RNA sequence: GGGAACGACUCGAGUAGAGUCGAAAAGAUAUGGAACUUGUAACGUAAAGCACAAUAUGAACUACGCUGCCAGAUCGGAAACGAUCUGGUAGCGCAUAUUAGCUUUACGUUACAAGUUCCUAAGUCACAUACCUUACAACUUCGGUUGUAAGGUAUGAAAAGAAACAACAACAACAAC
Reactivity to DMS in 0.01 (KOAc 150mM, MgCl2 10mM, bicine 150mM(pH8.5), 24C), signal-to-noise 6, nucleotides 027 to 126: g000a040u010a300u000g000g010a000a000c000u000u010g010u000a000a010c010g010u000a000a010a010g010c000a160c240a030a020u000a020u000g000a110a080c190u020a300c030g010c000u000g000c000c000a000g000a000u000c000g030g000a120a090a230c010g020a010u000c010u000g000g010u000a000g020c000g000c000a000u000a010u000u000a180g010c000u010u000u000a000c010g010u000u000a000c000a010a010g010u000u000c000c010u000a010a040g010u000c050a280